An RNA of 177 nucleotides, treated with 2A3 and DMS and read out base by base. The reactions ran in a buffer of 150 mM KOAc, 10 mM MgCl2 and 150 mM bicine (pH 8.5), at 24 C. DMS adducts were read by reverse transcription with MarathonRT. For 2A3 the reverse transcriptase was SuperScript II with manganese. It was measured as part of the RMDB libraries RFM100 and RFMREP.

RNA sequence: GGGAACGACUCGAGUAGAGUCGAAAACAUCGCGUUGCCAACUUAUGACAGAACAUCACUGGAGAGUAAUCUGUUGCUCUUACGGUGUUUAUAGCGCGCCAUUUGACGGAUGGUUUAUACUUGGCCCCGAUCGAUUCAAUUUCGAUUGAAUCGAUCGAAAAGAAACAACAACAACAAC
Reactivity to 2A3 in 0.01 (KOAc 150mM, MgCl2 10mM, bicine 150mM(pH8.5), 24C), signal-to-noise 9, nucleotides 027 to 126: c030a060u110c060g010c030g080u040u080g060c030c010a040a050c100u140u140a120u230g110a110c060a080g070a120a060c030a070u050c000a000c040u050g050g010a000g010a010g020u050a050a090u100c100u120g300u120u070g030c000u000c000u020u080a180c020g000g010u000g010u010u050u040a090u040a010g020c040g000c000g010c020c010a080u040u020u120g120a060c060g040g000a030u020g020g070u050u100u070a130u040a060c050u030u070g030g000c000c000c010
Reactivity to DMS in 0.01 (KOAc 150mM, MgCl2 10mM, bicine 150mM(pH8.5), 24C), signal-to-noise 4, nucleotides 027 to 126: c080a070u030c060g000c030g030u000u010g010c030c040a060a090c080u010u010a080u020g020a060c090a100g000a070a020c090a040u000c020a090c150u020g010g010a020g000a030g020u000a030a060u010c170u040g000u000u000g030c010u010c010u000u010a090c070g000g010u000g000u010u000u010a050u030a100g010c050g000c080g010c030c030a030u000u000u030g020a130c120g010g020a020u000g000g010u000u010u010a070u020a090c080u000u000g000g010c000c040c050